RNA sequence: GGGAACGACUCGAGUAGAGUCGAAAACGCUACUUUCGCUCCCACCGCGAGGAAAUUAUGCACAACACGGCUUUUGAUAAAUUGUUAACUGUUUAAUCAAUAAACGUUGAAACGAAUUAUCGGCUUUGGGUGAUUAUUGAGCGGCAAAGUAAAGGGGCCAUGUGGAAAUCUUCGGAUUUCCACAUGGAAAAGAAACAACAACAACAAC
Reactivity to 2A3 in 0.01 (KOAc 150mM, MgCl2 10mM, bicine 150mM(pH8.5), 24C), signal-to-noise 3, nucleotides 027 to 156: c040g020c050u030a030c010u060u050u100c020g000c030u010c020c000c000a010c010c020g030c010g060a100g120g100a080a060a030u140u050a100u280g070c000a010c000a030a190c010a040c020g010g000c000u160u240u090u240g010a000u020a040a040a040u050u010g010u030u050a060a040c010u040g050u020u010u030a110a100u150c080a070a100u080a130a050a010c010g030u040u060g090a120a050a000c020g010a010a030u030u000a040u050c020g000g000c000u060u020u060g000g020g000u030g040a010u000u100a010u010u070g020a020g010c000g020g020c030a040a030a070g030u110a070a010a110g000g010g010g010
Reactivity to DMS in 0.01 (KOAc 150mM, MgCl2 10mM, bicine 150mM(pH8.5), 24C), signal-to-noise 1, nucleotides 027 to 156: c010g000c050u000a010c020u000u000u000c020g020c060u040c000c020c010a200c030c000g000c040g020a240g010g050a100a080a050u000u010a060u000g030c110a060c040a040a100c030a010c030g030g000c050u000u000u000u010g010a070u000a000a040a070u000u000g040u000u000a100a050c050u020g020u000u010u000a110a260u000c080a110a160u010a040a010a050c010g000u030u000g020a130a070a120c050g000a030a140u010u000a030u000c020g000g030c020u000u000u020g000g030g000u020g000a110u000u010a020u020u010g000a230g010c020g010g000c000a070a100a110g020u010a070a040a110g020g000g010g020